The record gives the reactivity of an RNA of 177 nucleotides to 2A3 and DMS. High DMS reactivity at an A or C suggests that its Watson-Crick edge is free. For DMS the reverse transcriptase was MarathonRT. For 2A3, 7,281 sequencing reads were counted. Values are in units of 0.01, from 0 to 300, in steps of 10. The reactions ran in a buffer of 150 mM KOAc, 10 mM MgCl2 and 150 mM bicine (pH 8.5), at 24 C.
RNA sequence: GGGAACGACUCGAGUAGAGUCGAAAACAUAUCGAGAAUGAAUUCUUGGCUUAGGAAGUUAUAUUAAUCAGUAUCCUCUCAAAUACUUCUUUAUUGUAUAACCAUCUCGCUACUUUUAUGGACAUUAGAUACUAGUCGUAUUCGUACGACUAGUAUCAAAAGAAACAACAACAACAAC
Reactivity to 2A3 in 0.01 (KOAc 150mM, MgCl2 10mM, bicine 150mM(pH8.5), 24C), signal-to-noise 6, nucleotides 027 to 126: c020a030u140a050u110c050g020a010g040a110a100u130g050a090a140u120u000c020u060u070g070g000c020u050u060a040g020g030a040a020g030u090u030a080u010a030u120u200a080a070u090c020a010g020u020a040u050c020c030u080c020u010c050a050a080a060u020a050c010u060u070c000u060u160u050a120u080u100g010u020a040u020a100a020c000c000a040u000c020u020c050g030c030u060a070c050u150u130u030u140a060u160g060g000a020c020a090u080u140a040
Reactivity to DMS in 0.01 (KOAc 150mM, MgCl2 10mM, bicine 150mM(pH8.5), 24C), signal-to-noise 6, nucleotides 027 to 126: c070a100u010a090u010c050g000a060g010a090a090u020g010a140a120u000u000c050u000u000g010g020c100u000u010a070g000g010a070a110g010u000u000a020u000a040u010u000a040a040u000c040a040g010u000a020u000c040c050u000c060u010c110a090a120a050u000a030c020u000u010c040u000u020u000a050u030u010g010u010a040u010a050a050c040c050a070u000c020u000c100g010c080u000a060c100u000u010u000u000a080u010g000g010a090c140a100u010u010a090